Record summary:
This 207-nucleotide RNA was probed chemically with 2A3. The reactions ran in a buffer of 150 mM KOAc, 10 mM MgCl2 and 150 mM bicine (pH 8.5), at 24 C. Reactivities are given for positions 27 through 156.
RNA sequence: GGGAACGACUCGAGUAGAGUCGAAAAGGAGAAAGUAGGGCAGCGGCGUGUCGGAGAAGAAGGGGCGCGUCACGGUCUGCUGUCGGAGACGCAGUUUGAACGAGGCGAUGGGGUUCGACGGCAGUUGGUGCUGCGCGCUGCGGUAGGUCACGUUGAACAUGGGCCUUAUGUUCGCAUAAGGCCCAUGAAAAGAAACAACAACAACAAC
Reactivity to 2A3 in 0.01 (KOAc 150mM, MgCl2 10mM, bicine 150mM(pH8.5), 24C), signal-to-noise 1, nucleotides 027 to 156: g020g000a030g020a030a060a070g070u140a020g050g000g020c030a020g040c040g010g000c010g030u060g030u050c060g030g000a100g010a210a000g020a000a010g000g040g010g010c040g000c020g050u020c030a000c080g030g000u010c000u040g010c000u000g020u000c000g000g020a000g030a000c010g000c120a020g040u060u230u170g040a050a000c070g000a080g110g050c060g000a010u150g020g030g020g020u020u060c000g040a010c000g040g000c020a040g000u050u110g010g050u000g030c070u120g000c010g010c010g000c040u060g000c000g010g000u080a060g000g030u100c040a020c080g030u060u070g010a050a030